[RMDB]
RNA sequence: GGGAACGACUCGAGUAGAGUCGAAAAGAGAAGGGAGACUCCGGAACUUCUUCCAUGAUUGGGACGAAGCCGCCACCGGGCGCUCCCCUCGGAGGUCCCUCGAGGGGGUUCACAUCCCCAACCCGCGGAAGCUGGCCCUUCGGGGCCAGCAAAAGAAACAACAACAACAAC
Reactivity to 2A3 in 0.01 (KOAc 150mM, MgCl2 10mM, bicine 150mM(pH8.5), 24C), signal-to-noise 2, nucleotides 027 to 129: g000a000g030a100a140g000g000g000a010g030a050c000u000c050c000g020g000a010a010c010u000u000c000u010u000c000c000a030u170g060a100u210u170g080g000g000a010c100g000a000a000g100c100c040g180c080c030a180c000c040g010g020g000c050g000c020u000c040c010c010c000u020c000g000g000a000g000g000u010c020c000c000u000c070g060a030g000g000g000g000g000u090u130c050a020c000a010u040c010c000c000c010a010a000c020c000c010g080c030g040g030a050a000
Reactivity to DMS in 0.01 (KOAc 150mM, MgCl2 10mM, bicine 150mM(pH8.5), 24C), signal-to-noise 2, nucleotides 027 to 129: g020a110g030a080a010g080g000g000a030g010a140c040u000c010c010g020g020a000a000c000u010u010c000u010u000c000c000a110u030g020a160u040u030g010g000g050a020c080g030a080a000g000c300c000g040c120c120a180c080c120g010g020g010c180g000c030u030c000c000c000c040u030c000g000g020a030g000g130u000c030c000c040u000c100g030a140g030g010g000g000g060u060u010c170a100c070a200u040c000c000c000c000a030a040c020c040c000g020c180g040g040a000a000

Chemical mapping of a 170-nucleotide RNA with 2A3 and DMS. Values cover nucleotides 27 to 129. For DMS, 3,252 sequencing reads were counted. The 2A3 profile rests on 2,368 reads. The reactions ran in a buffer of 150 mM KOAc, 10 mM MgCl2 and 150 mM bicine (pH 8.5), at 24 C.